[RMDB]
RNA sequence: GGGAACGACUCGAGUAGAGUCGAAAAGAAGGUGCUUGAGUCAUUGGCAUGUGAGACUAAUAUACCUGCAUGCUAGUCUUCAGGUUCUGAUGGAAGUGACAUGCGUGAUGCUGUCAUGUGUUACUGUUCUCUCAUAGGAAUUCGUUCCUAUGAGAGAAAAAGAAACAACAACAACAAC
Reactivity to 2A3 in 0.01 (KOAc 150mM, MgCl2 10mM, bicine 150mM(pH8.5), 24C), signal-to-noise 9, nucleotides 027 to 126: g100a020a030g050g020u030g000c010u010u010g000a010g020u040c040a130u060u080g020g000c010a010u000g020u080g220a050g020a040c060u130a130a170u170a050u100a230c020c010u010g000c000a000u000g000c000u000a010g010u010c060u120u050c040a010g020g010u030u040c020u050g090a120u120g050g080a100a080g040u010g010a010c010a050u300g020c020g060u290g100a120u300g010c020u010g000u010c000a010u060g070u000g010u020u040a060c020u020g040u040
Reactivity to DMS in 0.01 (KOAc 150mM, MgCl2 10mM, bicine 150mM(pH8.5), 24C), signal-to-noise 6, nucleotides 027 to 126: g000a110a130g000g020u000g000c010u010u000g000a030g000u010c110a100u010u000g020g010c000a010u000g010u010g010a030g000a110c140u020a100a110u030a150u040a110c050c000u000g000c010a020u000g000c010u000a030g010u000c060u030u010c030a040g010g010u000u000c020u000g010a110u020g010g020a120a100g000u000g000a010c000a020u040g040c010g030u010g020a110u030g010c010u000g000u000c010a030u000g000u010g010u000u010a080c050u000g000u000
The record gives the reactivity of an RNA of 177 nucleotides to 2A3 and DMS. The data come from the RNA Mapping Database (RMDB), libraries RFM100 and RFMREP. Values are in units of 0.01, from 0 to 300, in steps of 10.